[RMDB]
RNA sequence: GGGAACGACUCGAGUAGAGUCGAAAACCCAGCGACUCGAUAGUCAGAUUUGACUAUCGAGAAGGCGGGACUGGAUUCAGGGCAUAGAAGCCUCCACUAUGCGAAAGAGAAAUCCCUGAAUCCAGUCCGGUUGAAGGAGGCACGACCGAAACGCCAAGCUAUUAUUACCAUUCGUGGUAAUAAUAGCAAAAGAAACAACAACAACAAC
Reactivity to DMS in 0.01 (KOAc 150mM, MgCl2 10mM, bicine 150mM(pH8.5), 24C), signal-to-noise 2, nucleotides 027 to 156: c000c020c000a150g030c080g030a180c010u000c010g000a000u000a000g020u000c000a110g000a270u000u010u010g020a020c020u000a010u000c000g000a030g000a010a080g010g010c020g010g020g000a030c000u000g010g000a030u000u000c040a030g020g010g000c030a050u010a050g000a060a060g010c020c010u000c000c030a300c030u000a030u000g020c020g060a150a170a110g000a150g000a160a090a130u000c030c000c000u000g000a030a000u000c000c000a030g000u010c000c000g000g000u000u000g040a050a020g070g030a050g010g000c010a300c020g020a000c030c010g030a110a090a130c020g030c000c000a070a300
Reactivity to 2A3 in 0.01 (KOAc 150mM, MgCl2 10mM, bicine 150mM(pH8.5), 24C), signal-to-noise 5, nucleotides 027 to 156: c000c000c010a030g110c040g170a100c000u000c000g000a000u010a000g000u000c010a050g070a300u300u210u190g000a000c010u000a000u000c010g000a000g000a000a040g010g000c020g000g000g000a000c000u010g000g000a000u000u000c000a000g000g000g000c000a000u010a000g050a130a040g050c000c000u000c000c000a020c000u000a000u010g030c040g120a180a260a070g080a040g040a020a100a050u140c020c000c000u000g000a000a000u010c000c000a000g000u000c000c000g010g010u000u000g040a140a080g000g010a000g000g010c000a020c000g000a000c000c000g080a300a120a010c000g000c010c010a030a000
An RNA of 207 nucleotides, treated with DMS and 2A3 and read out base by base. For DMS the reverse transcriptase was MarathonRT. The RNA was probed in 150 mM KOAc, 10 mM MgCl2 and 150 mM bicine (pH 8.5) at 24 C. The DMS profile rests on 3,396 reads.